RNA sequence: GGGAACGACUCGAGUAGAGUCGAAAACGUGAUGUGUGCAUCUCAACUCAUAAUGACUUCGAUAUUCGGUAAGGAAACCGAUAGAUUAUCAACGAAAGAACACUUCACUGAUGAUAAAUCAUACAUCGAUGGAGUCAUGCCUUCAACUGAUACGUAAUAGCGAGGUAGUGUUCGCACUACCUCGCUAAAAAGAAACAACAACAACAAC
Reactivity to 2A3 in 0.01 (KOAc 150mM, MgCl2 10mM, bicine 150mM(pH8.5), 24C), signal-to-noise 1, nucleotides 027 to 156: c000g060u060g020a070u000g160u050g010u080g060c080a000u080c000u000c050a000a090c000u000c070a120u110a070a120u070g120a040c070u050u150c010g040a000u000a120u010u060c000g000g020u120a150a150g180g040a090a070a070c000c000g000a000u000a080g050a020u060u130a000u140c040a000a020c050g020a080a090a090g120a010a000c000a020c090u000u000c000a050c050u000g000a000u000g000a000u000a000a120a070u140c070a090u110a070c000a040u050c000g060a090u060g000g020a050g020u070c000a020u040g000c000c000u110u090c000a000a020c000u000g010a050u050a170c020g030u110a020a130